[RMDB]
RNA sequence: GGGAACGACUCGAGUAGAGUCGAAAAAUCGCGGUGAUAAGAACGGAUGAUCUUGUUUGUGAACCCCACAUAACACAUCAUAAUCAUCAAUCGCCUUAUCAGUUACACAUCUUUCGAUUCAAUUAAAAUCCUACGAUGGCUUCGGCCAUCGUAGGAUAAAAGAAACAACAACAACAAC
Reactivity to 2A3 in 0.01 (KOAc 150mM, MgCl2 10mM, bicine 150mM(pH8.5), 24C), signal-to-noise 2, nucleotides 027 to 126: a000u080c010g010c000g080g010u000g000a010u010a000a040g020a030a040c060g070g000a000u000g000a000u000c020u030u150g130u180u020u060g010u060g010a100a070c030c020c050c000a080c010a040u280a060a050c000a000c000a000u050c000a000u060a160a000u020c000a000u000c000a000a090u120c100g080c000c000u020u020a080u060c000a010g000u090u150a070c030a030c080a030u060c050u020u050u060c000g080a070u030u020c040a040a000u030u200a060a060a030
The record gives the reactivity of an RNA of 177 nucleotides to 2A3. The 2A3 profile rests on 746 reads. Conditions: 150 mM KOAc, 10 mM MgCl2 and 150 mM bicine (pH 8.5), 24 C.